An RNA of 207 nucleotides, treated with 2A3 and read out base by base. The RNA was probed in 150 mM KOAc, 10 mM MgCl2 and 150 mM bicine (pH 8.5) at 24 C. 2A3 adducts were read by reverse transcription with SuperScript II with manganese.
RNA sequence: GGGAACGACUCGAGUAGAGUCGAAAAGACCUGGCUUGUCUCACUGCAGCACCAACAGGCUUCCUGGCCCGUGUUAGUCACAAGGGCAGCUGACAGAACAACCAGGGGGACCUGUCAGAAAACAUUUGUAGGGAUGUCUCACUGUUCCAGCAAUGCAAUUAUCGACCUGAUUCGUCAGGUCGAUAAUAAAAGAAACAACAACAACAAC
Reactivity to 2A3 in 0.01 (KOAc 150mM, MgCl2 10mM, bicine 150mM(pH8.5), 24C), signal-to-noise 1, nucleotides 027 to 156: g040a020c000c010u000g050g010c050u060u060g040u090c030u040c050a050c070u080g090c040a010g020c020a020c050c010a060a040c000a020g020g000c050u090u060c000c000u030g060g010c000c060c030g060u070g050u020u110a140g090u160c040a010c050a230a100g040g030g020c000a000g060c010u010g020a040c000a010g080a130a000c000a040a010c060c010a020g000g000g000g020g030a030c000c000u000g030u000c010a000g060a030a090a050a020c040a030u120u050u080g090u070a110g000g000g080a040u030g040u040c030u020c020a030c000u090g030u070u030c010c020a010g030c050a010a070u110g110c000a020